[RMDB]
Chemical mapping of a 207-nucleotide RNA with 2A3.
Values cover nucleotides 27 to 156.
The RNA was probed in 150 mM KOAc, 10 mM MgCl2 and 150 mM bicine (pH 8.5) at 24 C.

RNA sequence: GGGAACGACUCGAGUAGAGUCGAAAACGUGUCCGUCGGCGUAGCCGACAACAUGCCCAGUUAGCCCAGACCUUCAAGGCUACGGUGCGUUGCGACGCACGGUCUGAUUCUUCACAACGACGUUCACAAGAUCGGAUCACUUUCGAGUGAUCCGAAAGUCAUAGCUCGAGUUCGCUCGAGCUAUGACAAAAGAAACAACAACAACAAC
Reactivity to 2A3 in 0.01 (KOAc 150mM, MgCl2 10mM, bicine 150mM(pH8.5), 24C), signal-to-noise 1, nucleotides 027 to 156: c060g000u000g000u040c160c080g000u000c020g020g000c090g090u080a120g000c010c000g000a000c020a010a010c010a000u020g000c090c000c000a080g120u050u040a000g000c010c040c040a000g020a040c000c000u030u140c120a030a020g000g010c030u000a000c070g060g000u000g000c050g020u050u080g130c230g090a010c000g000c000a010c000g010g010u010c040u000g030a070u070u070c060u120u140c190a020c070a150a080c150g140a030c110g030u020u150c010a020c060a170a000g070a300u040c030g000g000a000u020c010a000c000u070u070u210c260g110a000g000u010g000a000u000c000c000g000a000a000a000